[RMDB]
RNA sequence: GGGAACGACUCGAGUAGAGUCGAAAACAGAUGGCUACAGCUCUUUGGCUUAUGUGCCAGAAUUUUUUGCAGAUAACCUGGGUGAUUUUCUCAUUUUUCUCCGCCGCUUUGCCGAUGACAUUUUGGAAACCGGGAUAUAAUUCGUUAUAUCCCGGUUAAAAGAAACAACAACAACAAC
Reactivity to DMS in 0.01 (KOAc 150mM, MgCl2 10mM, bicine 150mM(pH8.5), 24C), signal-to-noise 5, nucleotides 027 to 126: c110a080g000a110u000g000g000c020u010a070c090a120g000c030u010c120u020u020u030g020g010c020u010u020a060u030g010u020g010c020c030a050g010a080a000u000u000u020u030u010u020g010c060a080g010a100u010a050a090c070c060u020g000g010g020u000g010a070u010u010u020u000c030u030c030a110u010u010u020u010u010c040u010c020c020g010c050c030g010c030u000u010u020g000c010c010g010a070u020g000a100c110a100u000u010u010u000g020g010a170
Reactivity to 2A3 in 0.01 (KOAc 150mM, MgCl2 10mM, bicine 150mM(pH8.5), 24C), signal-to-noise 6, nucleotides 027 to 126: c050a030g110a100u060g060g020c020u060a020c030a040g000c010u020c030u110u120u170g030g010c020u070u080a080u230g110u060g020c000c010a010g040a020a030u050u090u030u060u100u170g040c040a010g010a070u070a060a090c010c010u050g020g010g030u070g090a130u020u040u130u030c030u010c040a080u080u080u020u080u030c020u010c010c020g030c000c010g010c020u030u070u070g060c020c010g050a050u070g030a040c060a100u110u140u110u090g050g050a000
The record gives the reactivity of an RNA of 177 nucleotides to DMS and 2A3. 2A3 adducts were read by reverse transcription with SuperScript II with manganese. The data come from the RNA Mapping Database (RMDB), library OK1LIB. The RNA was probed in 150 mM KOAc, 10 mM MgCl2 and 150 mM bicine (pH 8.5) at 24 C.